[RMDB]
RNA sequence: GGGAACGACUCGAGUAGAGUCGAAAACGCGUUUCGACGCGCGAAAUACCUUUGUGCAACUGGAGAAUAACAAAUCGUCCCAUGGCCCAUUGGGCCAUGAAGGACGAUUGUUAUUCGUUGAAAGUUGCACUCUGGUUAUAGCCAGGUUCGCCUGGAAGUCCCCCCCUAACUUCGGUUAGGGGGGGACAAAAGAAACAACAACAACAAC
Reactivity to 2A3 in 0.01 (KOAc 150mM, MgCl2 10mM, bicine 150mM(pH8.5), 24C), signal-to-noise 1, nucleotides 027 to 156: c030g000c010g000u030u150u200c180g090a080c120g020c000g010c010g090a060a140a100u300a070c060c000u000u000u000g000u000g010c000a000a000c000u040g070g030a000g010a010a000u000a010a000c030a010a060a160u000c000g000u000c000c000c000a000u000g000g020c020c000c050a300u150u300g000g000g040c000c000a000u040g000a000a000g020g000a000c000g040a000u000u000g010u000u000a000u000u000c000g000u000u010g000a010a000a000g000u000u000g000c000a020c000u000c000u010g000g020u000u010a090u080a170g110c000c000a030g020g060u060u080c200g030c110c000u040g000g190a000a000
The record gives the reactivity of an RNA of 207 nucleotides to 2A3. Values cover nucleotides 27 to 156. The RNA was probed in 150 mM KOAc, 10 mM MgCl2 and 150 mM bicine (pH 8.5) at 24 C. As a SHAPE reagent, 2A3 marks flexible, mostly unpaired nucleotides at the ribose 2'-OH.